[RMDB]
Background
An RNA of 177 nucleotides, treated with DMS and 2A3 and read out base by base. For DMS, 6,157 sequencing reads were counted. For 2A3, 17,930 sequencing reads were counted. The RNA was probed in 150 mM KOAc, 10 mM MgCl2 and 150 mM bicine (pH 8.5) at 24 C.
RNA sequence: GGGAACGACUCGAGUAGAGUCGAAAAGAUAUGGACGAUUUGCGCAACAGCUCGCAUUCGGAAACGAAUGCCGAGACAUGCGUUAAUCGUCCUAAGUCAAAGGCUGAAGUCUUCGGACUUCAGCCAAGUGUGUAUAACGGUUCGCCGUUAUACACACAAAAGAAACAACAACAACAAC
Reactivity to DMS in 0.01 (KOAc 150mM, MgCl2 10mM, bicine 150mM(pH8.5), 24C), signal-to-noise 4, nucleotides 027 to 126: g010a010u000a050u020g000g000a020c000g020a010u000u010u010g010c000g040c000a160a090c260a140g000c000u000c000g000c000a000u000u000c000g000g000a020a010a040c000g000a010a000u000g000c160c070g000a010g000a010c080a140u000g020c000g020u000u000a000a000u000c000g010u010c010c000u000a000a030g000u000c010a130a130a170g000g010c000u000g000a020a000g010u000c000u000u020c220g050g010a020c000u000u000c000a000g000c000c000a000a020
Reactivity to 2A3 in 0.01 (KOAc 150mM, MgCl2 10mM, bicine 150mM(pH8.5), 24C), signal-to-noise 6, nucleotides 027 to 126: g000a000u020a010u060g000g000a000c000g000a000u010u010u060g000c010g010c040a300a300c120a300g000c000u000c000g010c000a000u000u010c010g000g000a020a000a000c010g000a000a000u040g030c100c110g000a000g020a000c090a170u300g000c000g000u000u010a000a000u000c000g000u000c000c000u000a000a000g000u000c030a080a110a110g000g000c000u020g010a000a000g010u000c010u040u140c300g100g000a000c000u000u000c000a000g010c000c000a000a000